[RMDB]
RNA sequence: GGGAACGACUCGAGUAGAGUCGAAAAUGAAGCUGGAUUCGGUAGUAAUCGCGUGUCAGAAGCGCGCGGUGAAUACGUCCCUGCUCCUUGCACACACCGCCCGUCAAAGCACCCGAGUGGGGUCCGGGUGGGCUUUGAAAUUCGUUUCAAAGCCCACAAAAGAAACAACAACAACAAC
Reactivity to 2A3 in 0.01 (KOAc 150mM, MgCl2 10mM, bicine 150mM(pH8.5), 24C), signal-to-noise 5, nucleotides 027 to 126: u120g030a040a010g040c040u040g000g030a130u140u040c040g050g010u040a030g000u010a010a010u020c000g000c010g010u020g060u100c100a080g060a260a020g040c000g000c000g000c010g010g010u020g000a010a010u100a060c010g020u020c000c000c000u010g010c000u020c000c010u050u110g020c030a030c000a020c000a010c060c010g040c000c000c000g050u080c040a080a050a020g010c010a060c000c000c020g030a030g060u090g000g030g000g010u000c000c010g050g000
Reactivity to DMS in 0.01 (KOAc 150mM, MgCl2 10mM, bicine 150mM(pH8.5), 24C), signal-to-noise 2, nucleotides 027 to 126: u030g000a090a060g010c020u000g000g000a110u000u010c080g020g000u010a020g000u030a120a010u000c000g010c020g010u000g000u020c060a200g000a160a210g000c010g000c010g000c000g020g010u010g000a170a090u030a050c060g000u010c030c010c040u010g000c020u010c050c010u000u000g000c120a070c110a060c030a040c050c020g020c010c020c000g050u020c050a030a090a130g040c080a060c020c030c020g010a060g010u020g000g000g000g000u000c020c030g010g010